[RMDB]
RNA sequence: GGGAACGACUCGAGUAGAGUCGAAAAGCUAACGCGGUGAAACCCCCAUCUCUACUAAAAACACAAAAAAUUAGCUGGGCGUGAUGGCGGGUGCCUGUAGUCCCAGCUACUCGGGAGGCUGAGGCAGUCUUCUACAAAAUUUCGAUUUUGUAGAAGAAAAAGAAACAACAACAACAAC
Reactivity to 2A3 in 0.01 (KOAc 150mM, MgCl2 10mM, bicine 150mM(pH8.5), 24C), signal-to-noise 1, nucleotides 027 to 126: g040c000u060a100a000c030g000c030g030g010u050g010a150a010a050c020c050c060c000c000a050u020c050u000c020u090a150c050u050a040a030a040a100a000c080a030c000a020a100a010a050a160a240u060u050a020g000c000u000g000g010g030c050g060u080g080a010u050g040g030c100g070g230g070u160g020c000c010u050g030u070a040g090u130c020c000c010a020g000c020u030a020c020u000c000g060g010g000a020g050g000c040u020g010a030g030g000c020a020g070
Reactivity to DMS in 0.01 (KOAc 150mM, MgCl2 10mM, bicine 150mM(pH8.5), 24C), signal-to-noise 3, nucleotides 027 to 126: g010c030u000a040a120c130g010c060g000g010u010g000a070a070a080c040c010c040c020c050a120u000c020u000c040u010a040c060u000a020a020a030a040a050c070a070c070a020a020a060a090a070a070u000u000a010g010c000u000g010g010g020c060g010u000g000a050u000g000g010c030g030g020g020u010g020c010c010u000g020u000a100g000u000c000c000c000a020g010c010u000a010c040u000c080g010g000g010a040g000g000c030u010g000a090g000g020c100a080g010